[RMDB]
RNA sequence: GGGAACGACUCGAGUAGAGUCGAAAAAUCAAGGAGCGGAAGUCCAAAAGCUUAGCAUACCUGCAUCUCUCGCAGGAGGACGCGUGAGAGAGAAACGACCGUUCCAAAAUAUAAUCAGCUAAGCUAGAAUUUUAAUUAUAUUCGUAUAAUUAAAAUUAAAAGAAACAACAACAACAAC
Reactivity to DMS in 0.01 (KOAc 150mM, MgCl2 10mM, bicine 150mM(pH8.5), 24C), signal-to-noise 2, nucleotides 027 to 126: a050u020c120a100a130g010g000a040g000c010g020g000a140a130g020u010c020c050a130a070a000a090g000c000u000u000a000g010c000a110u030a150c020c020u000g010c040a150u000c040u020c000u000c010g030c020a070g000g000a120g010g020a020c060g030c170g000u010g010a160g000a070g000a050g020a060a030a050c060g000a300c050c010g060u000u000c000c000a010a070a080a130u020a040u010a160a050u040c110a070g000c000u000a000a020g010c000u010a190g000
Structure probing data (DMS) for a 177-nucleotide construct. The reactions ran in a buffer of 150 mM KOAc, 10 mM MgCl2 and 150 mM bicine (pH 8.5), at 24 C. The DMS profile rests on 1,686 reads. It was measured as part of the RMDB library OK1LIB.